The data come from the RNA Mapping Database (RMDB), library OK2TRN.
Chemical mapping of a 177-nucleotide RNA with DMS and 2A3.
The 2A3 profile rests on 1,392 reads.

RNA sequence: GGGAACGACUCGAGUAGAGUCGAAAAUCAGUUUGCAUCAAAAGGAGUGCUCUGCAAACCUUAUACCUAAUAAAAAUCCUUUAUCAAGAAAGAAUGGAUCCUAUUGCACCAUAAAGCCUCCAUAUAGCACCAUCAAUUACUUCGGUAAUUGAUGGUGAAAAGAAACAACAACAACAAC
Reactivity to DMS in 0.01 (KOAc 150mM, MgCl2 10mM, bicine 150mM(pH8.5), 24C), signal-to-noise 2, nucleotides 027 to 126: u000c170a070g010u000u010u000g000c030a010u010c090a070a090a070a130g000g020a120g030u000g020c030u000c090u010g010c040a010a020a040c040c060u010u010a120u000a110c050c010u010a090a100u010a010a090a120a100a030u010c000c010u000u000u000a040u010c110a070a120g000a060a160a080g000a040a100u000g010g010a010u000c070c060u010a050u000u000g010c110a150c040c060a010u010a030a080a060g010c040c000u000c010c060a110u000a060u010a140g010
Reactivity to 2A3 in 0.01 (KOAc 150mM, MgCl2 10mM, bicine 150mM(pH8.5), 24C), signal-to-noise 3, nucleotides 027 to 126: u060c050a030g010u020u010u010g030c060a070u120c060a130a090a160a060g140g000a100g190u160g010c000u000c010u050g070c050a010a070a010c010c000u080u020a050u090a140c000c030u060a130a130u090a130a280a060a040a010u100c010c010u110u140u080a180u090c030a030a110g140a300a100a000g050a160a000u070g010g030a030u030c010c010u110a090u070u160g020c060a050c010c030a070u090a160a150a030g030c030c010u000c020c040a030u090a020u020a100g120